[RMDB]
RNA sequence: GGGAACGACUCGAGUAGAGUCGAAAACAAGGAAAACGGCUGCCACAAGACAAUUAAAAGGAAGACUUAUUGACAGUAACAUAACAGAUAAGGAGCUAUGUGAAUCUUUGUCCAAAGAAUUCAGGUCCUCAUCCAGUAUCUUCGGAUACUGGAUGAGAAAAGAAACAACAACAACAAC
Reactivity to 2A3 in 0.01 (KOAc 150mM, MgCl2 10mM, bicine 150mM(pH8.5), 24C), signal-to-noise 1, nucleotides 027 to 126: c000a000a090g060g000a000a020a080a000c050g040g000c040u050g060c060c000a050c020a060a010g100a080c030a060a250u150u120a080a130a050a030g120g000a050a050g030a020c040u060u120a080u060u040g050a050c010a050g080u020a050a020c010a030u060a030a030c010a010g040a130u050a080a080g060g000a050g010c010u030a020u130g070u010g080a030a030u010c040u000u010u070g040u000c020c000a020a050a030g050a050a060u120u100c020a010g150g000u020c000
Reactivity to DMS in 0.01 (KOAc 150mM, MgCl2 10mM, bicine 150mM(pH8.5), 24C), signal-to-noise 1, nucleotides 027 to 126: c020a050a140g010g010a040a050a070a150c130g000g030c030u000g000c000c010a060c100a030a090g000a080c040a040a110u020u030a030a100a100a090g000g030a150a110g010a130c050u010u010a090u000u000g010a020c050a060g000u000a060a090c100a060u000a060a070c070a090g000a020u030a040a100g010g000a060g000c030u010a030u000g000u010g010a030a050u000c010u010u000u000g020u000c080c070a070a020a090g010a030a080u000u000c040a050g010g000u000c120
Chemical mapping of a 177-nucleotide RNA with 2A3 and DMS. DMS adducts were read by reverse transcription with MarathonRT. Conditions: 150 mM KOAc, 10 mM MgCl2 and 150 mM bicine (pH 8.5), 24 C. For 2A3 the reverse transcriptase was SuperScript II with manganese. High 2A3 reactivity points to a flexible backbone, as in loops and unpaired stretches.